[RMDB]
RNA sequence: GGGAACGACUCGAGUAGAGUCGAAAAUGCUUUAACCUUACAUUGCUGCUUUAAAUAGUUGAUUAAGCUGAUCAGCUUGUAAUAUGUAAUCUCUUCUGGGCCAUCAGAUCCAUAAUGGGUUUACUAGUCCCAAUUUACGGUUCGCCGUAAAUUGGGAAAAAGAAACAACAACAACAAC
Reactivity to 2A3 in 0.01 (KOAc 150mM, MgCl2 10mM, bicine 150mM(pH8.5), 24C), signal-to-noise 2, nucleotides 027 to 126: u160g020c010u040u020u110a100a080c000c000u000u010a040c040a090u030u030g000c050u000g000c010u020u250u010a210a200a100u180a060g000u000u030g050a120u130u000a100a010g150c070u070g010a050u000c010a000g020c000u000u020g010u040a070a060u000a070u300g020u010a000a100u040c020u000c000u060u030c030u010g000g060g000c040c020a120u040c010a030g060a040u010c000c000a040u130a070a050u220g000g000g000u060u030u030a100c000u000a000g030
Reactivity to DMS in 0.01 (KOAc 150mM, MgCl2 10mM, bicine 150mM(pH8.5), 24C), signal-to-noise 2, nucleotides 027 to 126: u070g000c020u020u020u000a060a160c150c120u000u000a030c030a050u010u000g000c030u000g000c090u030u000u000a040a040a130u000a070g000u000u000g040a080u010u030a090a060g010c070u030g000a080u000c030a020g000c000u000u010g020u020a080a080u010a040u090g010u020a030a020u000c030u010c000u000u000c160u000g000g000g040c090c050a080u030c090a060g010a030u010c000c000a120u000a020a070u020g010g000g010u000u030u000a020c000u000a130g000